[RMDB]
RNA sequence: GGGAACGACUCGAGUAGAGUCGAAAAGAUAUGGAGUGCAUGAAACCUGGAACUACCAUCGGGAUUAAGGUCGGAAACGACCUUAAUUCUCUAGCGUGUGGCCAGGGAGUACGUGCACUCCUAAGUCCCUUUAGUUAGAGUUCGCUCUAACUAAAGGAAAAGAAACAACAACAACAAC
Reactivity to DMS in 0.01 (KOAc 150mM, MgCl2 10mM, bicine 150mM(pH8.5), 24C), signal-to-noise 5, nucleotides 027 to 126: g000a120u010a270u010g000g000a030g030u000g010c020a000u000g000a180a210a230c010c000u010g010g010a180a090c030u000a100c010c010a180u000c290g010g000g000a020u000u000a010a000g010g000u010c010g000g000a100a110a250c000g000a000c000c000u000u000a000a000u000u000c000u010c070u010a140g010c270g010u010g000u010g000g000c000c000a010g000g000g000a050g000u000a050c300g000u000g000c010a010c000u000c000c000u000a010a080g010u000c030
Reactivity to 2A3 in 0.01 (KOAc 150mM, MgCl2 10mM, bicine 150mM(pH8.5), 24C), signal-to-noise 3, nucleotides 027 to 126: g070a020u130a030u220g000g010a020g000u000g000c000a020u240g010a090a010a040c000c000u010g050g000a200a290c070u130a010c190c020a110u170c110g030g000g010a010u020u010a000a010g000g000u000c000g030g000a070a090a090c010g000a000c000c000u000u000a000a010u020u010c000u010c000u010a030g040c090g040u230g000u040g160g300c010c020a020g030g000g020a000g000u030a010c060g000u000g000c000a000c000u000c000c000u000a000a000g010u000c000

The data come from the RNA Mapping Database (RMDB), library TTRINS. An RNA of 177 nucleotides, treated with DMS and 2A3 and read out base by base. 2A3 is a SHAPE reagent: it acylates the 2'-hydroxyl of flexible nucleotides of all four kinds.